[RMDB]
RNA sequence: GGGAACGACUCGAGUAGAGUCGAAAAAGUGUGCUUCGGCACACUAAAAAUCCUAAGUCGAUUCAUCGAUCGUCAUGGGAGCAUCGAUCUAUCGGAAACGAUAGGGAGCUCCCAGACGGGAGAAUCGAUAUGGAAAAAAGCCGGUUUCGACCGGCAACAAUUACAUAGGUUUCGACCUAUGUAAUUGAAAAGAAACAACAACAACAAC
Reactivity to 2A3 in 0.01 (KOAc 150mM, MgCl2 10mM, bicine 150mM(pH8.5), 24C), signal-to-noise 4, nucleotides 027 to 156: a010g010u010g000u000g000c000u030u070c110g090g000c010a000c000a000c000u020a030a020a000a000a000u050c020c000u050a160a040g020u000c000g010a010u000u020c040a140u150c300g150a140u050c010g020u010c050a300u020g000g000g000a000g000c010a140u300c030g070a050u020c020u000a010u000c010g020g040a110a050a070c000g000a000u000a010g010g010g000a000g000c010u000c000c000c000a000g000a000c000g000g040g000a020g000a010a000u000c000g000a000u000a070u130g050g000a050a040a020a030a070a070g000c010c010g020g050u020u080u120c200g080a030c000c000g010g000c000a000a000
Reactivity to DMS in 0.01 (KOAc 150mM, MgCl2 10mM, bicine 150mM(pH8.5), 24C), signal-to-noise 1, nucleotides 027 to 156: a080g020u000g020u000g030c020u030u020c300g030g000c000a010c000a010c000u000a000a020a090a110a080u010c000c000u000a090a250g000u000c000g010a020u010u000c010a240u000c170g000a080u000c000g050u020c030a140u000g010g030g000a020g000c010a210u000c130g000a030u020c010u000a020u010c010g020g020a200a130a290c010g000a020u000a030g000g000g000a030g050c000u000c010c000c000a000g000a010c000g000g000g010a070g000a030a000u000c000g000a030u000a110u010g020g010a000a060a140a060a110a150g050c000c000g040g000u000u000u000c190g010a070c030c010g000g010c000a000a010